[RMDB]
RNA sequence: GGGAACGACUCGAGUAGAGUCGAAAAUAGUCCUUCGGGACUAAGUUCAACCUUUGUGCUAAGAUGUAUAGGGAGAAACCACGACCCAUUGGGUCGUGAAGUUUCGAAGAACUAUACUACCUUAGCACUCUGGUAUCGCGAAGCUUUCGAGCUUCAACGUUAACUUGACAUUCGUGUCAAGUUAACGAAAAGAAACAACAACAACAAC
Reactivity to DMS in 0.01 (KOAc 150mM, MgCl2 10mM, bicine 150mM(pH8.5), 24C), signal-to-noise 2, nucleotides 027 to 156: u000a020g010u010c000c000u000u010c290g100g020g000a040c000u010a000a090g000u000u000c020a170a060c000c000u000u010u000g040u000g000c000u010a000a010g010a010u010g010u010a000u000a000g000g010g010a220g000a040a040a030c010c010a030c020g000a030c000c000c010a300u000u000g060g040g040u000c000g010u000g000a020a090g020u000u000u000c010g000a080a170g010a150a170c000u000a010u000a010c010u000a010c030c000u000u010a030g010c010a010c010u000c020u000g010g040u000a050u000c090g060c100g000a080a080g030c000u000u000u000c230g010a090g030c020u000u000c010a070a150